The record gives the reactivity of an RNA of 177 nucleotides to DMS and 2A3. Source: RMDB libraries RFM100 and RFMREP, as collected in RNAgym. 2A3 adducts were read by reverse transcription with SuperScript II with manganese.
RNA sequence: GGGAACGACUCGAGUAGAGUCGAAAAUGAAGCCGGCUCUUGGUGUCGCUUUGCUGCGACUGCCUUUUGCCAUUGAUGAUCGUUCUUCCUUCCCGCAAGGGUGGGUAAGAGGGAGAGGACGCAGUCUCCGUAACAGAUAUUUCGAUAUCUGUUACGGAAAAGAAACAACAACAACAAC
Reactivity to DMS in 0.01 (KOAc 150mM, MgCl2 10mM, bicine 150mM(pH8.5), 24C), signal-to-noise 4, nucleotides 027 to 126: u040g000a080a150g020c130c090g000g020c020u000c030u000u020g000g020u000g000u000c010g010c010u000u010u040g020c210u010g000c000g010a040c020u020g040c000c000u000u020u020u000g000c020c000a180u020u010g010a100u030g000a120u000c000g000u010u010c020u000u010c010c020u000u010c010c010c040g010c200a130a170g000g000g030u000g010g000g010u030a040a050g010a090g010g000g000a050g020a100g010g010a100c110g000c070a090g000u010c080u000
Reactivity to 2A3 in 0.01 (KOAc 150mM, MgCl2 10mM, bicine 150mM(pH8.5), 24C), signal-to-noise 9, nucleotides 027 to 126: u180g020a040a010g100c060c040g010g000c010u000c010u030u050g000g000u020g010u020c010g030c030u160u130u300g150c240u080g000c010g020a020c040u090g060c000c000u010u030u030u030g020c010c010a040u060u120g040a060u070g050a070u090c020g100u040u000c000u030u040c010c000u040u080c000c010c010g010c060a110a180g180g100g010u080g000g020g030u110a110a050g040a050g040g030g000a070g010a020g020g020a010c030g000c070a020g050u010c010u000